RNA sequence: GGGAACGACUCGAGUAGAGUCGAAAAUCGAAUAACAAGUUUAUUGACAUCAUAAUCUCCAUAAGUUAAAAAUAAAGCGUUCGCUAUGACAUUUAAAGCUGUCGUUUUAACAUCUGAUCUUAAAUGACCUCUUACAUUCAUUCGUGAAUGUAAGAGGAAAAGAAACAACAACAACAAC
Reactivity to DMS in 0.01 (KOAc 150mM, MgCl2 10mM, bicine 150mM(pH8.5), 24C), signal-to-noise 3, nucleotides 027 to 126: u020c060g000a060a040u010a010a100c140a160a120g020u060u000u010a010u000u000g010a070c040a050u020c060a080u010a100a080u010c020u000c030c050a080u040a030a080g000u020u010a020a070a080a050a040u020a100a100a070g000c050g020u030u040c150g010c030u010a030u040g020a070c060a020u020u010u030a070a100a150g000c150u000g010u010c020g010u000u000u000u010a000a050c060a080u020c120u010g020a080u010c050u010u000a030a040a110u040g010a180
Reactivity to 2A3 in 0.01 (KOAc 150mM, MgCl2 10mM, bicine 150mM(pH8.5), 24C), signal-to-noise 7, nucleotides 027 to 126: u110c010g030a000a010u130a020a040c110a130a060g040u070u090u040a120u080u100g070a040c000a040u070c020a040u080a170a100u050c050u040c070c030a100u080a190a090g050u060u140a070a080a040a120a110u200a060a130a000g020c030g040u120u100c040g030c040u040a050u190g040a050c040a070u180u200u140a090a120a010g040c040u040g030u050c030g000u000u050u020u040a050a040c060a070u060c150u140g060a080u010c020u040u150a090a170a170u120g080a060
The record gives the reactivity of an RNA of 177 nucleotides to DMS and 2A3.
Conditions: 150 mM KOAc, 10 mM MgCl2 and 150 mM bicine (pH 8.5), 24 C.
Reactivities are given for positions 27 through 126.
For 2A3 the reverse transcriptase was SuperScript II with manganese.
Source: RMDB library OK1LIB, as collected in RNAgym.
For DMS the reverse transcriptase was MarathonRT.